[RMDB]
RNA sequence: GGGAACGACUCGAGUAGAGUCGAAAAGACCACAGCGAUGGCGCUCGGUGAGCUGGCGCAUCAAGUCGAUGACGGGGCUCGCGUCCGCAACACCGGGCAGUCCCGCGGCGAACAGCGCUUGCCGGUCACGGCCAGUGCGCUUCGGCGCACUGGCCGUAAAAGAAACAACAACAACAAC
Reactivity to 2A3 in 0.01 (KOAc 150mM, MgCl2 10mM, bicine 150mM(pH8.5), 24C), signal-to-noise 1, nucleotides 027 to 126: g010a000c050c050a080c010a000g050c040g130a240u040g020g070c020g000c000u030c000g000g040u050g020a060g000c030u030g010g000c000g000c000a000u070c080a020a080g050u000c000g120a230u190g090a110c060g210g020g000g000c020u000c060g070c050g040u050c050c030g130c090a220a000c000a000c000c000g020g000g000c000a000g000u000c020c000c000g000c000g020g000c000g010a050a000c150a030g130c010g000c100u120u130g000c020c020g020g000u070c050
An RNA of 177 nucleotides, treated with 2A3 and read out base by base. Reactivities are given for positions 27 through 126. 2A3 adducts were read by reverse transcription with SuperScript II with manganese. The reactions ran in a buffer of 150 mM KOAc, 10 mM MgCl2 and 150 mM bicine (pH 8.5), at 24 C. It was measured as part of the RMDB library OK1LIB.